Chemical mapping of a 177-nucleotide RNA with 2A3 and DMS. The reactions ran in a buffer of 150 mM KOAc, 10 mM MgCl2 and 150 mM bicine (pH 8.5), at 24 C. For 2A3, 1,962 sequencing reads were counted.

[RMDB]
RNA sequence: GGGAACGACUCGAGUAGAGUCGAAAAUCUGAAGAGUUCGCUCUUCAGAAAAUACCGAGAGUCAACCUCGGUAGAGUUCACUAACCCUUGGAAACAAGGGAAAAACGGAAUGGUUCGCCAUUCCGAAGUACGAUCAUACGUUCGCGUAUGAUCGUACAAAAGAAACAACAACAACAAC
Reactivity to 2A3 in 0.01 (KOAc 150mM, MgCl2 10mM, bicine 150mM(pH8.5), 24C), signal-to-noise 1, nucleotides 027 to 126: u020c010u020g000a000a000g020a010g020u070u070c200g100c070u020c000u000u000c000a000g000a000a030a010a000u020a010c010c000g010a010g000a010g150u170c070a100a070c030c000u000c010g000g000u000a020g000a000g010u030u130c070a040c170u080a090a140c000c010c000u010u010g030g040a060a060a020c000a000a020g020g010g040a080a000a000a040a040c010g010g010a000a000u010g010g030u040u030c230g050c080c010a000u000u000c000c010g000a100a000
Reactivity to DMS in 0.01 (KOAc 150mM, MgCl2 10mM, bicine 150mM(pH8.5), 24C), signal-to-noise 2, nucleotides 027 to 126: u000c010u000g000a000a040g000a030g000u000u010c240g040c000u000c000u000u050c010a030g010a080a040a080a080u000a000c000c000g000a000g000a120g010u010c150a080a150c120c000u010c000g000g010u000a020g010a240g000u010u000c060a070c060u000a090a170c000c000c000u000u000g000g000a200a090a150c010a010a000g000g010g000a010a010a010a160a090c030g000g000a010a010u000g000g000u010u010c300g010c000c000a020u000u000c000c000g010a040a030